[RMDB]
RNA sequence: GGGAACGACUCGAGUAGAGUCGAAAAGAGGAAGUCUGAGGUCCCAAUAUGUAUCCCGCAGUUCUCCAAGGAUCAUGAGAUACACCUGAUGGCCUUCAUGUGCAAUAUGCUAGCUGUGGUCGUCAACUCAGAGAUGUGGAUUCGUCCACAUCUCUGAAAAAGAAACAACAACAACAAC
Reactivity to 2A3 in 0.01 (KOAc 150mM, MgCl2 10mM, bicine 150mM(pH8.5), 24C), signal-to-noise 3, nucleotides 027 to 126: g100a010g060g120a130a030g160u010c040u040g060a050g050g100u020c030c000c000a000a050u160a070u080g050u020a020u030c000c010c030g030c060a020g010u030u030c060u030c050c040a070a110g050g030a050u020c010a050u100g040a010g030a080u080a050c040a040c040c060u030g010a010u030g010g000c010c040u070u190c030a040u120g030u000g040c000a090a170u140a080u300g010c010u040a060g000c040u020g030u040g040g020u000c010g000u000c020a020a080c010
Reactivity to DMS in 0.01 (KOAc 150mM, MgCl2 10mM, bicine 150mM(pH8.5), 24C), signal-to-noise 3, nucleotides 027 to 126: g010a090g000g020a090a120g010u000c030u000g020a130g020g010u000c000c000c030a090a110u010a050u000g010u000a050u000c040c020c010g000c120a100g020u000u000c020u000c060c130a130a100g010g020a050u000c050a100u010g000a090g020a110u010a070c070a080c120c100u000g010a050u000g020g000c060c010u010u030c040a030u000g030u000g000c030a070a130u020a100u010g010c040u000a100g020c080u000g000u000g000g010u000c020g000u000c020a030a130c150